[RMDB]
RNA sequence: GGGAACGACUCGAGUAGAGUCGAAAAGGUAGCCAGCAACACCCACCGGUGCCUGCCACCACUCACACACAGGCUUCAGAGAAGAGGGGAGGGGCUUGGGAACUCAAAGACCCUUUUGGAGCCAGGUGACUCCAGUGGGAAGUCAUGUGCAAGGCCAUAAUGAUUAUCAGUUCGCUGAUAAUCAUUAAAAAGAAACAACAACAACAAC
Reactivity to DMS in 0.01 (KOAc 150mM, MgCl2 10mM, bicine 150mM(pH8.5), 24C), signal-to-noise 3, nucleotides 027 to 156: g040g030u010a030g040c030c010a130g040c080a070a080c040a130c040c000c030a110c090c050g010g030u000g020c000c020u000g000c030c020a120c080c020a120c090u000c090a150c110a120c090a100c050a150g010g000c020u000u060c000a100g010a220g010a100a140g010a110g000g010g070g020a080g000g020g000g000c070u000u010g030g020g000a160a090c060u000c050a040a060a110g000a210c010c000c020u000u010u030u010g020g000a010g010c010c010a150g020g030u010g000a040c020u030c020c010a070g030u010g020g020g000a120a050g010u000c040a040u000g010u000g020c020a060a090g000g020c030c030a130
Reactivity to 2A3 in 0.01 (KOAc 150mM, MgCl2 10mM, bicine 150mM(pH8.5), 24C), signal-to-noise 3, nucleotides 027 to 156: g050g020u050a010g040c040c020a010g030c050a000a070c010a040c030c000c000a020c020c040g010g030u070g020c020c060u050g000c030c000a030c020c030a070c030u110c010a070c000a010c000a000c010a070g010g000c000u030u020c010a040g050a050g050a300a040g030a070g040g010g010g000a030g010g010g020g000c010u070u050g080g040g030a080a030c010u030c140a060a100a040g090a110c010c000c000u040u030u050u040g010g000a010g000c010c010a030g010g000u020g010a070c020u010c030c020a010g020u010g000g020g030a030a010g080u110c040a040u090g010u010g040c030a080a110g020g010c020c010a020